[RMDB]
Chemical mapping of a 177-nucleotide RNA with 2A3 and DMS. The DMS profile rests on 912 reads. 2A3 adducts were read by reverse transcription with SuperScript II with manganese. Reactivities are given for positions 27 through 126.

RNA sequence: GGGAACGACUCGAGUAGAGUCGAAAACAAAAACCAUUCAACGCCGAAGGACUGGCUCUCAUCCAGUGGAUGCAUUGAGUGAAUUGAUUGUCAGGGCUGUCUCUAGGUUUAAUCCCAGACCUCUCUGGUGAACCAAUAUGUUCGCAUAUUGGUUCACAAAAGAAACAACAACAACAAC
Reactivity to 2A3 in 0.01 (KOAc 150mM, MgCl2 10mM, bicine 150mM(pH8.5), 24C), signal-to-noise 1, nucleotides 027 to 126: c040a010a100a010a000a040c040c000a000u060u070c030a070a020c040g020c010c060g070a100a040g140g080a020c030u000g050g000c000u030c030u030c000a070u010c030c000a050g090u080g030g020a090u100g020c010a050u000u060g020a000g020u060g020a140a130u090u060g060a040u120u070g080u130c000a000g000g020g020c020u020g030u000c010u000c020u040a000g000g010u020u000u010a010a010u000c050c000c000a010g040a040c030c010u060c010u010c030u040g050
Reactivity to DMS in 0.01 (KOAc 150mM, MgCl2 10mM, bicine 150mM(pH8.5), 24C), signal-to-noise 1, nucleotides 027 to 126: c040a040a030a070a110a050c080c030a020u000u010c040a020a030c060g020c020c100g010a170a150g000g010a060c030u000g030g000c210u000c090u010c130a090u000c020c010a060g000u000g020g010a110u020g000c070a030u010u000g020a060g010u010g010a050a130u020u010g010a080u020u010g010u030c060a070g000g010g010c300u000g000u000c030u000c040u000a100g000g020u000u020u000a060a140u000c000c000c020a160g010a040c070c040u000c060u000c030u000g010